[RMDB]
RNA sequence: GGGAACGACUCGAGUAGAGUCGAAAAUAGCGCGUUACCAUUAAGCUCAGUAAUCUCAUUACGAGUAAUCGGGAUAGAACGCAUAAUAACGUCUUUACUGUAGACAAGAUCGCGUUGCAAGCGCAUACGAACUAAUCUAUAUAAGUUAGUAAUAAACAUGGCAGUUACUAUUCGUAGUAACUGCCAUAAAAGAAACAACAACAACAAC
Reactivity to DMS in 0.01 (KOAc 150mM, MgCl2 10mM, bicine 150mM(pH8.5), 24C), signal-to-noise 2, nucleotides 027 to 156: u000a090g010c040g040c020g020u000u000a170c070c060a110u000u010a100a290g030c000u030c000a110g050u010a120a020u000c030u000c150a140u010u010a070c010g010a190g060u000a040a060u010c130g000g030g010a240u000a130g000a070a100c120g050c030a070u000a080a060u000a070a120c040g060u000c040u000u000u000a040c040u020g030u000a030g010a040c050a090a220g010a140u000c060g000c020g040u000u000g000c010a200a150g010c110g010c040a120u000a020c100g020a090a060c000u000a050a040u000c050u000a170u000a190u000a050a040g020u000u000a070g000u000a050a090u020a070a120a130c100
Reactivity to 2A3 in 0.01 (KOAc 150mM, MgCl2 10mM, bicine 150mM(pH8.5), 24C), signal-to-noise 2, nucleotides 027 to 156: u060a000g030c000g000c020g030u040u130a070c010c000a000u060u030a080a090g020c000u000c090a080g010u030a030a080u110c120u070c300a080u030u050a000c020g000a000g020u040a010a060u110c090g020g000g010a030u050a130g100a090a000c000g000c020a000u130a030a090u090a070a070c020g040u000c030u020u090u090a120c060u170g070u230a010g000a000c000a000a040g090a130u210c100g010c030g010u040u120g050c070a070a010g000c000g000c030a000u060a130c000g020a050a000c000u020a040a030u100c020u020a040u060a080u020a300a000g020u010u030a000g020u030a030a300u080a060a030a020c100

Overview: Chemical mapping of a 207-nucleotide RNA with DMS and 2A3. For DMS, 2,138 sequencing reads were counted. The RNA was probed in 150 mM KOAc, 10 mM MgCl2 and 150 mM bicine (pH 8.5) at 24 C. For DMS the reverse transcriptase was MarathonRT.